[RMDB]
RNA sequence: GGGAACGACUCGAGUAGAGUCGAAAAUAGCCAAUACCGCCAAAUACCUUAAGGUGCGACUGACGCGUAAUGUCCAUCGAGAGCAUGACCUGCCCAAUAUAUCCACGUGCCUCUAUCGCCUUGAGCAGAAAACGUACCAUUUCGAUGGUACGUUUUCAAAAGAAACAACAACAACAAC
Reactivity to 2A3 in 0.01 (KOAc 150mM, MgCl2 10mM, bicine 150mM(pH8.5), 24C), signal-to-noise 2, nucleotides 027 to 126: u050a010g000c010c010a010a030u070a050c030c000g010c040c000a060a060a040u160a090c020c000u060u100a070a040g010g010u030g040c030g050a070c020u050g000a020c030g030c000g100u100a100a060u090g020u010c050c000a030u060c070g050a050g020a010g080c040a060u070g040a060c020c000u030g020c000c000c000a050a000u160a040u020a020u080c020c010a030c070g010u030g030c010c000u000c010u010a050u080c010g040c000c000u020u080g010a020g000c050a020
Reactivity to DMS in 0.01 (KOAc 150mM, MgCl2 10mM, bicine 150mM(pH8.5), 24C), signal-to-noise 2, nucleotides 027 to 126: u000a080g020c060c040a070a080u000a110c080c010g010c000c070a050a070a130u000a070c070c020u000u000a100a070g000g010u010g020c090g010a070c060u000g010a110c100g010c100g000u000a070a110u010g000u000c020c030a080u000c060g010a140g000a110g010c070a050u010g000a040c060c030u000g010c020c010c040a080a050u010a070u000a080u000c040c040a050c040g020u000g000c020c040u000c010u000a050u000c100g000c030c020u000u010g000a090g020c080a090